[RMDB]
RNA sequence: GGGAACGACUCGAGUAGAGUCGAAAAAGCCUGCUCCUAUCUGGUGGCCUGACCAAUGUCACCACUUGGCCUGGGUCAACUCCUGCUGGACCUCAGGACACACUGGCUUGUCAUGAGGGAAGCUCAGAUGAUUAUUUCGUUUCGACGAAAUAAUCAUAAAAGAAACAACAACAACAAC
Reactivity to 2A3 in 0.01 (KOAc 150mM, MgCl2 10mM, bicine 150mM(pH8.5), 24C), signal-to-noise 5, nucleotides 027 to 126: a000g030c010c010u010g020c030u030c010c000u090a150u140c060u040g020g010u020g020g020c000c020u080g070a130c010c060a060a060u110g010u040c020a000c050c000a010c030u030u040g020g000c000c020u030g010g000g030u040c020a040a040c050u010c020c020u020g000c010u040g030g240a080c000c000u020c010a010g020g020a000c010a000c000a010c050u130g140g030c060u050u040g010u010c020a020u040g010a020g000g000g020a030a010g010c030u020c100a110g020
Reactivity to DMS in 0.01 (KOAc 150mM, MgCl2 10mM, bicine 150mM(pH8.5), 24C), signal-to-noise 7, nucleotides 027 to 126: a120g010c010c010u000g000c110u000c010c010u000a050u000c090u010g020g030u000g010g000c020c100u000g010a140c110c150a080a080u010g020u010c020a050c080c040a060c090u000u000g000g010c080c030u000g020g010g000u000c050a060a090c110u010c040c030u000g020c020u000g010g020a280c010c010u000c010a020g010g000a020c020a030c080a230c170u000g010g000c140u000u000g010u000c020a070u000g010a040g000g000g010a160a060g000c020u000c100a120g010

The record gives the reactivity of an RNA of 177 nucleotides to 2A3 and DMS.
It was measured as part of the RMDB library OK2TST.
Reactivities are rounded to 0.1 and cut off at 0 and 3.